[RMDB]
RNA sequence: GGGAACGACUCGAGUAGAGUCGAAAAUUAUGCCAUUUGGUAUCUGACACAUAAUCAUUUCUCUGAUUAUGUGUCUCGAAACAUGGCAGAAAGUGAGGGGGAACGGUCCUUGCGACACUGGUUGCUAUUGAGUAAAUGGGUUCGCCCAUUUACUCAAAAAAGAAACAACAACAACAAC
Reactivity to 2A3 in 0.01 (KOAc 150mM, MgCl2 10mM, bicine 150mM(pH8.5), 24C), signal-to-noise 3, nucleotides 027 to 126: u110u040a070u040g000c000c020a020u100u030u160g100g020u140a100u040c040u060g000a000c010a000c000a010u000a000a000u000c000a010u030u300u120c210u060c070u070g000a000u000u000a000u000g000u000g000u000c010u000c000g000a000a000a010c010a000u010g000g000c000a000g040a000a030a010g060u050g040a040g000g020g000g010g030a070a050c040g040g030u060c010c020u040u080g020c050g030a010c010a030c070u040g090g000u040u020g050c030u040a040
Reactivity to DMS in 0.01 (KOAc 150mM, MgCl2 10mM, bicine 150mM(pH8.5), 24C), signal-to-noise 5, nucleotides 027 to 126: u030u020a050u000g000c000c000a030u000u020u040g030g020u030a040u010c040u000g000a010c000a010c000a010u000a000a000u010c000a050u010u030u030c150u030c260u000g010a020u000u000a010u000g010u000g010u000c000u000c110g010a070a070a080c070a030u010g000g010c000a010g000a100a090a090g010u000g010a180g000g000g000g010g010a120a090c160g000g010u020c030c030u010u000g010c080g010a040c060a070c140u010g000g010u000u000g020c040u000a140